[RMDB]
Record summary
Chemical mapping of a 177-nucleotide RNA with DMS and 2A3. For 2A3, 614 sequencing reads were counted. For 2A3 the reverse transcriptase was SuperScript II with manganese. The reactions ran in a buffer of 150 mM KOAc, 10 mM MgCl2 and 150 mM bicine (pH 8.5), at 24 C.
RNA sequence: GGGAACGACUCGAGUAGAGUCGAAAAGUGAUCCGGCAGGCGUCGGCGAUGUUGUCGGCGCCGUUGAGGCGGUGCAGAUUGAUCGCGGUGUUGCGUAGCGUUGCUAGGACCUGUGCGCCGUGUCCGGGUAGGAGGCAGGAUUCGUCCUGCCUCCUACAAAAGAAACAACAACAACAAC
Reactivity to DMS in 0.01 (KOAc 150mM, MgCl2 10mM, bicine 150mM(pH8.5), 24C), signal-to-noise 2, nucleotides 027 to 126: g030u030g000a120u020c000c000g000g000c020a220g000g020c000g030u000c010g000g000c000g020a120u070g010u040u060g000u000c000g000g000c010g010c010c000g000u000u000g000a110g010g000c010g000g020u010g000c030a030g000a090u020u040g010a140u020c050g010c020g000g040u030g020u010u010g000c080g010u030a070g000c070g060u000u060g000c020u000a100g000g000a090c060c040u020g010u010g000c020g000c010c000g000u000g000u030c000c020g000g010
Reactivity to 2A3 in 0.01 (KOAc 150mM, MgCl2 10mM, bicine 150mM(pH8.5), 24C), signal-to-noise 2, nucleotides 027 to 126: g190u030g000a110u120c020c000g070g030c050a040g000g000c000g000u000c000g090g050c010g040a290u280g210u300u240g000u000c000g000g000c000g080c000c000g000u000u010g000a000g000g000c050g150g000u060g090c000a000g070a110u150u090g060a020u080c010g000c000g000g080u060g050u050u150g080c080g020u050a020g000c010g150u120u070g010c000u110a110g020g030a010c000c000u010g000u050g080c000g010c000c060g000u050g000u000c030c000g030g000